[RMDB]
RNA sequence: GGGAACGACUCGAGUAGAGUCGAAAAGAUAUGGAUCGGAUUUGGGAGCAGGCCAUCGGAAACGAUGGAUCUGCUUUGAUCAAGCCGAUCCUAAGUCAAAUCAGAGUUGCGUUCGCGCAACUCUGAAUCUAUGCUAUGCCUUCGGGCAUAGCAUAGAAAAAGAAACAACAACAACAAC
Reactivity to DMS in 0.01 (KOAc 150mM, MgCl2 10mM, bicine 150mM(pH8.5), 24C), signal-to-noise 2, nucleotides 027 to 126: g010a020u000a150u010g010g000a010u000c000g020g000a120u010u000u000g010g010g000a020g010c010a000g000g010c000c000a000u010c020g020g000a110a040a110c000g010a000u010g020g000a090u010c010u000g020c000u000u000u010g030a050u000c020a020a010g010c000c010g010a020u000c000c000u000a010a070g000u000c020a140a110a250u010c000a000g010a000g010u010u000g020c000g030u000u010c290g010c000g020c000a000a010c000u020c000u000g010a020a090
Source: RMDB library TTRDES, as collected in RNAgym. Chemical mapping of a 177-nucleotide RNA with DMS. For DMS, 2,808 sequencing reads were counted. Reactivities are rounded to 0.1 and cut off at 0 and 3.